An RNA of 177 nucleotides, treated with 2A3 and DMS and read out base by base.
DMS adducts were read by reverse transcription with MarathonRT.
Conditions: 150 mM KOAc, 10 mM MgCl2 and 150 mM bicine (pH 8.5), 24 C.
The DMS profile rests on 2,313 reads.
[RMDB]
RNA sequence: GGGAACGACUCGAGUAGAGUCGAAAAGCUGCCUCUGACGUCCUUCUCCCCCGGAAACGGGGCCGAAGGGUGGUAAGGCGCGUCGCCUGGCGCUGGCACGGGUAUGCGUGGUGGUCGACCCUGGCCGAGUGGAUUUACGAUUCGUCGUAAAUCCACUAAAAGAAACAACAACAACAAC
Reactivity to 2A3 in 0.01 (KOAc 150mM, MgCl2 10mM, bicine 150mM(pH8.5), 24C), signal-to-noise 1, nucleotides 027 to 126: g010c010u030g020c000c030u050c260u300g110a030c010g020u000c010c000u020u000c010u020c000c000c000c000c000g000g050a010a040a000c000g000g020g030g000c000c000g000a020a000g020g000g030u030g020g040u060a020a060g020g000c020g000c020g070u070c050g050c020c030u030g040g000c030g000c120u120g060g050c100a050c070g020g050g020u120a050u190g060c030g030u070g000g170u070g000g040u060c020g020a080c020c010c030u020g000g040c050c040g000
Reactivity to DMS in 0.01 (KOAc 150mM, MgCl2 10mM, bicine 150mM(pH8.5), 24C), signal-to-noise 2, nucleotides 027 to 126: g020c030u010g020c010c030u000c120u020g010a100c110g030u000c000c010u000u000c000u000c300c000c010c000c010g010g010a090a070a160c020g010g000g010g040c040c060g000a010a020g010g010g010u000g000g010u000a130a070g020g000c020g000c030g020u000c070g010c020c010u000g000g000c070g020c070u000g000g020c030a060c080g000g000g050u010a060u020g000c040g030u000g010g020u000g010g010u000c030g010a100c030c030c040u000g030g000c010c050g000